[RMDB]
Source: RMDB library OK1LIB, as collected in RNAgym. Structure probing data (2A3 and DMS) for a 177-nucleotide construct.
RNA sequence: GGGAACGACUCGAGUAGAGUCGAAAAGAAAAAGUCGUCGAGUCCGGAGAAUAUCGAGUAGUGGAUACGAUCCGGAGGAGACGAAAGUCUCGAAGUAUCGACUACAAGAUAUCGAGACGACGAAAAAGGGUAAUAAUUCCUUCGGGAAUUAUUACCCAAAAGAAACAACAACAACAAC
Reactivity to 2A3 in 0.01 (KOAc 150mM, MgCl2 10mM, bicine 150mM(pH8.5), 24C), signal-to-noise 2, nucleotides 027 to 126: g100a000a210a000a010a020g100u030c000g000u000c000g000a000g100u000c010c000g020g060a000g020a060a100u030a000u070c050g020a030g130u160a030g040u170g110g050a010u030a030c020g000a050u000c000c000g000g010a020g010g020a020g000a000c010g000a000a000a000g000u000c000u020c010g010a090a000g080u030a000u000c010g030a030c090u180a090c080a040a090g000a000u010a020u000c000g000a010g000a000c000g010a010c060g060a080a070a000a000a000
Reactivity to DMS in 0.01 (KOAc 150mM, MgCl2 10mM, bicine 150mM(pH8.5), 24C), signal-to-noise 2, nucleotides 027 to 126: g050a060a000a180a060a100g000u010c000g020u010c000g010a300g000u000c030c000g090g080a020g010a150a070u000a000u000c020g010a150g000u010a140g050u030g000g000a000u000a040c060g030a210u010c010c080g000g040a040g000g000a300g000a000c040g000a000a030a100g020u000c000u010c030g000a060a130g000u030a000u000c030g000a060c060u060a130c170a090a140g010a000u000a040u000c000g000a200g000a000c000g000a080c120g000a000a040a180a130a160
The 2A3 profile rests on 1,130 reads. Reactivities are rounded to 0.1 and cut off at 0 and 3. The reactions ran in a buffer of 150 mM KOAc, 10 mM MgCl2 and 150 mM bicine (pH 8.5), at 24 C. DMS adducts were read by reverse transcription with MarathonRT.